[RMDB]
Overview
The record gives the reactivity of an RNA of 207 nucleotides to 2A3 and DMS. It was measured as part of the RMDB library OK3TST. For DMS the reverse transcriptase was MarathonRT. Reactivities are given for positions 27 through 156. The RNA was probed in 150 mM KOAc, 10 mM MgCl2 and 150 mM bicine (pH 8.5) at 24 C. As a SHAPE reagent, 2A3 marks flexible, mostly unpaired nucleotides at the ribose 2'-OH. The 2A3 profile rests on 1,508 reads.
RNA sequence: GGGAACGACUCGAGUAGAGUCGAAAAAGUUUGUAUAAGCACUGUUUAAGCUUCCCAGUGCAUGCCAAUUGGUGUUUACAGACGAGUAUGGUAUUGACCAUAUGAUACUAUUCUCUCUCUCAGGAGAGGAGAAUAGAUAACUACAAAGGAGGUACAAUGAUUUACGUAGGUUCGCCUACGUAAAUCAAAAAGAAACAACAACAACAAC
Reactivity to 2A3 in 0.01 (KOAc 150mM, MgCl2 10mM, bicine 150mM(pH8.5), 24C), signal-to-noise 3, nucleotides 027 to 156: a000g040u050u020u020g040u020a030u030a200a070g010c000a010c000u010g070u060u090u110a080a020g000c020u030u000c010c000c000a000g010u000g000c020a030u090g000c000c060a270a300u140u210g010g000u040g020u050u060u020a020c020a030g040a020c030g020a010g010u000a010u020g000g030u020a110u210u240g180a050c000c000a000u010a030u050g050a020u040a070c000u000a000u000u010c010u010c000u000c000u000c010u010c060a110g230g040a000g020a020g060g050a060g000a010a000u000a000g010a000u080a040a100c120u190a030c070a030a060a020g020g000a010g020g010u060a100c060a090a140
Reactivity to DMS in 0.01 (KOAc 150mM, MgCl2 10mM, bicine 150mM(pH8.5), 24C), signal-to-noise 2, nucleotides 027 to 156: a110g030u000u010u000g020u010a020u010a100a120g050c050a070c040u000g010u000u000u000a060a100g020c030u000u070c020c040c010a170g010u000g050c050a170u000g010c040c030a100a140u030u010g060g030u010g000u000u020u000a080c050a110g000a050c030g000a180g040u000a010u010g000g030u000a220u000u010g000a100c020c010a010u010a000u000g000a160u000a070c020u000a010u000u000c000u000c000u000c010u000c010u000c210a180g040g000a070g030a030g060g000a020g000a020a010u000a000g010a110u000a030a140c110u000a200c100a050a090a110g010g000a090g020g000u000a090c040a120a300